The data come from the RNA Mapping Database (RMDB), library PDB130.
Structure probing data (2A3 and DMS) for a 207-nucleotide construct.
Reactivities are rounded to 0.1 and cut off at 0 and 3.
RNA sequence: GGGAACGACUCGAGUAGAGUCGAAAAGAUCCUAAGAGAUGGUUUCAAAGGCCUGACAGGCCACCAUCGAAAGGGAAUCCGGUUAAGAUUCCGGAACCUGGAUAUGGAUUCUUCACGGUAACGUAACUGAAUGUGGAGACGUCGGCGCGAGCCCUGGCUUAUUUAUUAGCUUCGGCUAAUAAAUAAGAAAAGAAACAACAACAACAAC
Reactivity to 2A3 in 0.01 (KOAc 150mM, MgCl2 10mM, bicine 150mM(pH8.5), 24C), signal-to-noise 5, nucleotides 027 to 156: g020a040u020c000c010u030a080a010g030a010g000a070u010g030g030u070u150u230c180a130a080a050g020g000c020c040u090g130a060c120a080g010g000c000c000a000c000c010a010u010c010g010a060a010a000g010g010g020a020a150u000c000c000g000g040u030u090a160a080g050a240u220u060c010c000g000g010a030a030c000c000u020g030g020a030u070a080u150g030g020a030u100u050c000u050u040c040a010c040g040g060u120a210a010c040g030u040a050a040c080u090g110a230a100u110g010u020g030g030a040g000a040c030g040u060c040g040g020c030g000c020g040a040g020c000c000c020u010g040g000
Reactivity to DMS in 0.01 (KOAc 150mM, MgCl2 10mM, bicine 150mM(pH8.5), 24C), signal-to-noise 4, nucleotides 027 to 156: g000a100u000c000c000u010a110a190g020a240g010a020u000g010g020u000u000u010c020a050a010a030g020g040c000c000u010g000a230c190a250g020g000c000c010a050c010c000a010u000c010g000a100a120a100g000g000g010a140a110u000c010c000g040g000u010u010a090a210g010a300u000u010c000c000g010g010a020a060c010c010u000g010g000a190u010a050u000g010g000a100u000u000c020u000u000c010a050c040g030g010u000a070a070c040g000u010a050a150c070u020g010a080a130u000g020u000g020g010a160g020a050c050g030u000c010g020g000c030g010c050g010a150g020c010c010c030u010g000g000

The reactions ran in a buffer of 150 mM KOAc, 10 mM MgCl2 and 150 mM bicine (pH 8.5), at 24 C.